[RMDB]
RNA sequence: GGGAACGACUCGAGUAGAGUCGAAAAAUUUGUAAUUCAAAGACAACAACUGUCUGACCCCUUCCCCAUUGAGGCAGAUGGUUGGCAAGGACAAGCCUGUCCAGGUUGAAAUGGGUCCAGAGUGGAAUACGCUUUAAUUAUUCGUAAUUAAAGCGUAAAAAGAAACAACAACAACAAC
Reactivity to DMS in 0.01 (KOAc 150mM, MgCl2 10mM, bicine 150mM(pH8.5), 24C), signal-to-noise 9, nucleotides 027 to 126: a090u000u000u010g010u000a090a090u010u010c110a090a100a110g010a080c070a050a110c030a020a020c020u000g010u000c000u000g000a170c010c010c010c020u000u000c040c010c000c060a090u000u010g010a300g000g010c020a010g010a020u010g000g010u000u000g010g010c160a080a050g010g010a040c040a070a110g020c080c050u000g000u010c040c030a130g010g000u000u000g000a040a030a040u010g000g010g010u000c040c030a070g010a120g020u010g010g010a100a160
Reactivity to 2A3 in 0.01 (KOAc 150mM, MgCl2 10mM, bicine 150mM(pH8.5), 24C), signal-to-noise 4, nucleotides 027 to 126: a000u130u110u100g040u070a040a210u200u130c080a120a100a040g050a040c010a040a000c010a010a010c060u010g010u000c010u040g300a300c010c010c010c020u020u020c020c010c000c000a010u030u070g030a060g000g010c000a010g000a020u020g020g000u020u020g030g050c020a100a110g020g000a000c020a070a040g130c010c040u040g000u000c010c020a040g090g010u060u100g020a030a040a040u020g020g000g000u000c040c020a130g060a040g240u160g050g040a080a030
An RNA of 177 nucleotides, treated with DMS and 2A3 and read out base by base. The DMS profile rests on 12,815 reads. The 2A3 profile rests on 3,861 reads.